[RMDB]
RNA sequence: GGGAACGACUCGAGUAGAGUCGAAAAGAUAUGGAGCCAGGGUUGGCCAUCAACAGCUCGGAAACGAGACAUGAUGGACCUGGCUCCUAAGUCAAAACAGUACCAAACGUUCGCGUUUGGUACUGAAGUCGGAUACAAGGUUCGCCUUGUAUCCGACAAAAGAAACAACAACAACAAC
Reactivity to DMS in 0.01 (KOAc 150mM, MgCl2 10mM, bicine 150mM(pH8.5), 24C), signal-to-noise 1, nucleotides 027 to 126: g000a030u030a300u000g000g000a030g010c010c000a000g000g010g040u020u010g030g000c010c000a010u010c000a010a130c230a110g010c000u000c020g030g000a190a110a220c020g010a010g000a010c040a300u000g000a000u020g000g000a180c000c000u010g050g000c010u000c010c010u000a020a050g030u010c050a150a110a110a190c000a000g000u000a000c000c020a000a030a030c000g020u000u010c160g010c010g000u000u000u010g010g010u000a000c000u000g010a130a000